Chemical mapping of a 177-nucleotide RNA with 2A3 and DMS. The 2A3 profile rests on 1,135 reads. 2A3 adducts were read by reverse transcription with SuperScript II with manganese. For DMS, 967 sequencing reads were counted. The RNA was probed in 150 mM KOAc, 10 mM MgCl2 and 150 mM bicine (pH 8.5) at 24 C.
[RMDB]
RNA sequence: GGGAACGACUCGAGUAGAGUCGAAAAUGAUGCCGACGAUGUAGCCAUCGAUGUCUACAAGCCACAGGUAAGCUGGCACAAUGCUAACGGUUCUCGGUAUGCUGACGAAUUCGUUGCAGGACGCGACGCUGCCAGUAAUCUUCGGAUUACUGGCAGCAAAAGAAACAACAACAACAAC
Reactivity to 2A3 in 0.01 (KOAc 150mM, MgCl2 10mM, bicine 150mM(pH8.5), 24C), signal-to-noise 2, nucleotides 027 to 126: u090g070a040u110g010c010c000g020a050c040g040a050u160g050u120a030g050c030c010a050u140c160g100a070u070g000u100c020u020a020c010a110a010g020c010c040a080c040a050g060g000u100a080a030g060c070u030g000g000c050a030c050a050a060u070g040c000u030a000a000c030g000g050u050u000c020u040c000g000g020u090a070u260g140c030u010g040a150c140g020a040a050u250u300c000g030u010u040g050c000a010g050g020a000c030g050c000g030a030c040
Reactivity to DMS in 0.01 (KOAc 150mM, MgCl2 10mM, bicine 150mM(pH8.5), 24C), signal-to-noise 2, nucleotides 027 to 126: u010g000a130u000g010c010c030g040a070c140g000a010u000g010u010a060g000c090c070a040u000c140g010a130u000g000u000c010u040a080c090a040a140g000c030c000a010c140a150g020g000u010a080a070g000c120u000g000g020c000a060c120a100a070u000g000c000u010a020a060c000g000g000u000u000c030u020c000g020g000u000a010u000g010c000u000g050a030c170g000a030a080u050u000c130g000u000u000g020c030a050g000g020a110c220g020c030g000a150c120